[RMDB]
RNA sequence: GGGAACGACUCGAGUAGAGUCGAAAAUUCUGCUUCUGGCGGCAACAUGCUAUGGGGUGGUGGUUCCGCUUAUGGGGUCAAAUCAAUACGUUCUAAGAAGAAAUAUUUGAAUCUCAUCGAUCUCAUACCCUCUAGUAGUGUUCGCACUACUAGAGGGAAAAGAAACAACAACAACAAC
Reactivity to 2A3 in 0.01 (KOAc 150mM, MgCl2 10mM, bicine 150mM(pH8.5), 24C), signal-to-noise 2, nucleotides 027 to 126: u050u010c010u020g000c000u030u030c050u060g020g050c010g020g010c020a050a050c010a060u070g000c040u110a090u080g030g000g010g030u070g020g010u010g010g020u020u000c000c020g010c030u080u040a050u070g020g030g000g000u000c010a150a000a010u050c020a050a050u070a050c120g050u070u020c030u110a110a100g070a080a020g080a020a220a010u180a080u050u070u080g050a070a130u040c020u010c110a140u130c080g020a030u010c000u010c050a000u090a080
Reactivity to DMS in 0.01 (KOAc 150mM, MgCl2 10mM, bicine 150mM(pH8.5), 24C), signal-to-noise 1, nucleotides 027 to 126: u000u000c040u010g030c030u000u000c010u000g000g010c070g000g000c090a070a150c160a060u010g000c100u000a110u000g000g000g000g040u000g010g020u000g010g000u000u000c010c010g000c110u000u010a030u000g000g000g010g020u010c000a040a070a070u000c060a080a070u000a050c180g000u000u000c010u000a120a170g000a060a050g010a010a050a080u000a110u010u010u010g010a020a060u010c080u010c200a060u000c090g000a010u000c020u000c030a040u000a120
An RNA of 177 nucleotides, treated with 2A3 and DMS and read out base by base. Source: RMDB library OK2TST, as collected in RNAgym. The RNA was probed in 150 mM KOAc, 10 mM MgCl2 and 150 mM bicine (pH 8.5) at 24 C. Reactivities are given for positions 27 through 126.